[RMDB]
RNA sequence: GGGAACGACUCGAGUAGAGUCGAAAACAUCAGUCGUUCGCGACUGAUGAAACGUGCUAGCGCUGCACGAAAAAGUCGAUCGAAUACCGAUCGACAAGCGCUAAAGAUAGGCCUUCGGGCCUAUCAACGUCCCUUUUUAGUUCGCUAAAAAGGGACGAAAAGAAACAACAACAACAAC
Reactivity to DMS in 0.01 (KOAc 150mM, MgCl2 10mM, bicine 150mM(pH8.5), 24C), signal-to-noise 2, nucleotides 027 to 126: c000a010u000c000a000g000u000c000g100u010u010c200g060c000g010a000c000u000g020a000u020g000a070a090a160c000g000u000g000c000u000a050g000c000g020c000u000g020c020a000c020g010a060a110a060a010a010g010u000c000g030a010u010c000g040a300a130u000a160c220c010g000a000u000c000g000a000c000a010a000g000c000g050c000u000a070a120a150g000a020u000a000g010g010c000c000u000u010c170g010g010g040c000c000u000a000u010c000a130a110
Reactivity to 2A3 in 0.01 (KOAc 150mM, MgCl2 10mM, bicine 150mM(pH8.5), 24C), signal-to-noise 2, nucleotides 027 to 126: c000a000u000c000a000g000u020c010g060u080u100c260g010c000g060a000c000u030g000a000u010g000a000a010a000c010g000u010g000c030u040a010g000c010g000c000u030g010c000a020c010g130a190a040a020a000a000g000u000c000g000a000u000c000g000a040a040u130a300c150c020g000a010u000c000g000a000c000a010a010g000c000g000c010u010a000a000a000g000a000u000a000g000g020c010c010u020u090c260g050g000g000c010c000u020a000u000c000a000a000
About this RNA:
Structure probing data (DMS and 2A3) for a 177-nucleotide construct. 2A3 adducts were read by reverse transcription with SuperScript II with manganese.